[RMDB]
RNA sequence: GGGAACGACUCGAGUAGAGUCGAAAAAAUACAAUGCCCUAAAAGGAAGAUGGGGUUUCCUUCUAGUUAUGGGAAGUAGGCUUCUGAGUGUCAAGUGUCAAGAUAUCUUGUUCUCUAGAGCUGCAAAGAAAGCAAGACUAUUCGUAGUCUUGCUUUCAAAAGAAACAACAACAACAAC
Reactivity to DMS in 0.01 (KOAc 150mM, MgCl2 10mM, bicine 150mM(pH8.5), 24C), signal-to-noise 4, nucleotides 027 to 126: a070a070u010a070c160a120a080u010g000c010c010c000u010a050a060a070a060g000g000a070a030g000a100u010g010g010g000g020u010u000u000c020c010u000u010c060u010a090g010u000u000a100u020g000g000g010a050a060g010u000a100g020g000c020u000u000c070u000g000a030g030u000g010u010c010a010a040g010u010g000u020c170a080a130g000a120u010a050u000c000u000u000g000u000u000c010u000c010u000a130g010a050g010c020u010g010c150a060a060a090
Reactivity to 2A3 in 0.01 (KOAc 150mM, MgCl2 10mM, bicine 150mM(pH8.5), 24C), signal-to-noise 3, nucleotides 027 to 126: a000a000u260a050c120a090a100u180g010c000c010c010u080a130a140a010a020g070g010a010a040g050a080u150g050g000g000g000u000u040u010c020c000u020u020c020u030a120g050u160u090a070u190g070g000g010a070a060g050u110a080g030g030c020u080u010c020u100g010a010g000u030g100u110c010a000a040g020u010g060u150c050a070a060g060a190u090a030u140c020u020u020g020u000u000c000u000c020u000a000g000a000g010c020u010g000c040a010a070a080

Source: RMDB library OK2TST, as collected in RNAgym. Chemical mapping of a 177-nucleotide RNA with DMS and 2A3. In probing experiments dimethyl sulfate is read out at A N1 and C N3, which are open when not base-paired. DMS adducts were read by reverse transcription with MarathonRT. Conditions: 150 mM KOAc, 10 mM MgCl2 and 150 mM bicine (pH 8.5), 24 C.